[RMDB]
RNA sequence: GGGAACGACUCGAGUAGAGUCGAAAAGGGUGAUGUCUCCUAACCUUUAUCAAUGGGGGCACUCGGUCGUGCUGUGGGUAGAAAUUUUAUUUCGUGCCUACCUUAGAUGCUUGUCGUCGGGAGUAUGUGGGACUGAUGAACUUCGGUUCAUCAGUAACAAGUGAUGAUGAUUCGUCAUCAUCACUUGAAAAGAAACAACAACAACAAC
Reactivity to 2A3 in 0.01 (KOAc 150mM, MgCl2 10mM, bicine 150mM(pH8.5), 24C), signal-to-noise 9, nucleotides 027 to 156: g070g000g010u080g020a090u050g020u030c010u010c020c010u040a080a100c020c020u130u230u130a180u170c120a080a110u180g000g000g000g000g000c000a010c020u020c010g040g010u020c010g030u040g040c050u060g000u040g010g000g000u030a030g110a020a060a010u150u250u150u140a150u060u090u080c060g040u110g020c000c010u010a020c010c010u050u070a060g010a080u070g030c050u100u140g090u180c030g010u010c020g000g030g000a050g040u090a100u140g040u100g020g020g010a010c000u000g000a000u000g000a000a000c010u040u060c150g040g000u000u000c000a000u000c000a000g010u000a000a030
Reactivity to DMS in 0.01 (KOAc 150mM, MgCl2 10mM, bicine 150mM(pH8.5), 24C), signal-to-noise 4, nucleotides 027 to 156: g010g010g020u010g010a070u000g020u000c010u010c020c020u000a100a080c060c030u000u000u000a120u000c140a140a090u000g020g040g010g020g000c020a040c030u000c030g030g010u000c040g020u000g040c030u010g020u000g020g030g010u010a240g000a020a010a060u010u000u010u000a070u000u020u000c020g010u000g000c020c010u010a020c010c100u000u010a090g010a110u000g010c030u000u000g030u010c030g020u000c010g010g030g000a110g020u000a060u000g010u010g000g020g000a060c000u010g000a030u000g000a030a010c000u010u010c300g030g000u010u010c000a010u020c010a020g030u000a030a300